[RMDB]
The data come from the RNA Mapping Database (RMDB), library OK3TST. Structure probing data (DMS and 2A3) for a 207-nucleotide construct.
RNA sequence: GGGAACGACUCGAGUAGAGUCGAAAAAAUACGCCAUACAUCUGACAAACACAAGUUACUGGAGAUAUUAUACGUAUAUACGAGAUGAAAACGACGAUAGCAGGCCGUGACCCUACGAGACGUCCGCAAAUGUGUCAUUGCUGUGGGGGCAAGACAAGACUGUAUUCUGGUUCGCCAGAAUACAGUCAAAAGAAACAACAACAACAAC
Reactivity to DMS in 0.01 (KOAc 150mM, MgCl2 10mM, bicine 150mM(pH8.5), 24C), signal-to-noise 1, nucleotides 027 to 156: a100a060u000a050c030g010c000c030a130u000a130c070a050u050c040u010g000a120c030a090a110a070c010a160c040a060a110g050u010u010a040c110u010g000g020a100g010a120u000a030u010u010a170u010a060c040g020u010a050u000a130u010a100c000g000a080g010a110u000g000a090a060a110a130c070g020a020c060g060a070u000a070g000c050a090g010g030c020c030g000u000g000a140c020c000c010u000a070c070g000a160g020a080c040g000u010c000c000g050c010a060a060a060u000g000u000g000u000c000a130u000u000g050c030u000g060u030g040g040g140g000g040c010a060a090g000a050c070a090a200
Reactivity to 2A3 in 0.01 (KOAc 150mM, MgCl2 10mM, bicine 150mM(pH8.5), 24C), signal-to-noise 3, nucleotides 027 to 156: a000a000u200a030c050g020c040c010a050u050a070c040a040u100c060u100g060a070c060a050a150a020c030a020c060a080a160g040u040u100a070c050u040g070g000a030g010a030u060a040u120u140a130u080a050c040g040u060a070u010a010u000a170c060g020a010g030a120u100g080a030a060a060a010c040g070a010c080g040a040u070a050g040c040a020g070g000c030c000g030u040g020a050c010c010c030u010a020c030g040a020g020a100c010g040u010c000c000g030c070a020a080a070u100g030u020g010u070c050a170u000u090g000c010u040g010u070g030g010g000g010g020c010a010a010g030a030c020a020a040
For 2A3 the reverse transcriptase was SuperScript II with manganese. For DMS the reverse transcriptase was MarathonRT. The RNA was probed in 150 mM KOAc, 10 mM MgCl2 and 150 mM bicine (pH 8.5) at 24 C.